[RMDB]
RNA sequence: GGGAACGACUCGAGUAGAGUCGAAAACAUGGAUCAGCCAUGGCGACAGGAUCCAUGCAUGGGAUCGAUCCUAGCUAGACAGUCUAGCGUACGUACGAUCGAUCACAUCAUGAUCUCGUACGAUCCACUGACAAAAUACCUUCGGGUAUUUUGUCAGAAAAGAAACAACAACAACAAC
Reactivity to DMS in 0.01 (KOAc 150mM, MgCl2 10mM, bicine 150mM(pH8.5), 24C), signal-to-noise 3, nucleotides 027 to 126: c050a080u000g000g000a260u000c130a160g020c020c010a050u010g020g000c060g000a060c030a080g010g000a040u000c050c080a010u000g000c230a010u010g000g000g010a010u000c020g000a000u000c000c070u010a110g010c000u000a010g000a280c300a130g000u010c000u000a000g010c010g000u000a070c270g020u020a110c300g000a010u000c020g010a010u000c000a010c030a030u000c060a030u000g000a030u000c000u000c050g000u010a060c060g010a090u000c010c010a140
Reactivity to 2A3 in 0.01 (KOAc 150mM, MgCl2 10mM, bicine 150mM(pH8.5), 24C), signal-to-noise 2, nucleotides 027 to 126: c000a020u050g000g000a100u150c070a010g180c010c010a060u060g050g050c030g030a030c020a090g060g000a010u020c130c030a000u030g020c030a000u010g020g000g020a000u000c010g000a000u000c030c010u010a040g000c010u010a010g020a140c170a130g110u090c020u000a010g010c020g050u090a080c100g030u050a040c060g010a000u010c010g000a000u010c010a010c010a010u030c010a010u030g000a010u000c030u020c030g010u060a110c030g000a020u020c010c000a050
The record gives the reactivity of an RNA of 177 nucleotides to DMS and 2A3. The 2A3 profile rests on 3,846 reads. Source: RMDB library OK2TRN, as collected in RNAgym. 2A3 adducts were read by reverse transcription with SuperScript II with manganese.